[RMDB]
RNA sequence: GGGAACGACUCGAGUAGAGUCGAAAAGAAAAUGGUAGCAACGGAUCCAAAGGAGCCGAAGUUCAAAGCUAAGGCAUCGAUCUAAAAUGCUACCAAAAAGGUAACGAGCUUGGCAAUGAACAAAAAACAAUGACACAUAGUUCGCUAUGUGUCAUUGAAAAGAAACAACAACAACAAC
Reactivity to 2A3 in 0.01 (KOAc 150mM, MgCl2 10mM, bicine 150mM(pH8.5), 24C), signal-to-noise 2, nucleotides 027 to 126: g090a010a070a030a060u120g000g000u000a020g020c010a010a040c090g010g000a000u020c040c040a110a100a230g090g020a040g000c020c020g030a020a010g020u090u070c130a250a090a000g000c000u020a020a000g000g010c010a030u080c050g000a010u010c000u020a070a040a080a080u070g010c000u000a010c000c000a000a000a000a000a000g030g020u030a060a000c060g010a010g010c060u070u080g050g080c060a080a200u140g030a100a060c030a050a080a020a000a010a010
Reactivity to DMS in 0.01 (KOAc 150mM, MgCl2 10mM, bicine 150mM(pH8.5), 24C), signal-to-noise 4, nucleotides 027 to 126: g010a050a070a110a120u000g010g010u000a010g010c010a070a160c200g010g010a010u010c010c160a110a110a190g020g010a130g010c000c010g000a140a060g020u000u010c300a080a110a150g000c000u000a050a210g020g010c020a060u010c090g010a020u000c010u010a070a060a100a080u000g000c010u000a000c000c000a000a000a060a080a030g000g000u010a030a090c100g010a080g000c020u000u000g000g000c080a040a070u000g010a040a020c060a000a030a100a040a050a040

Overview:
This 177-nucleotide RNA was probed chemically with 2A3 and DMS. In probing experiments dimethyl sulfate is read out at A N1 and C N3, which are open when not base-paired. For 2A3, 2,089 sequencing reads were counted. 2A3 adducts were read by reverse transcription with SuperScript II with manganese.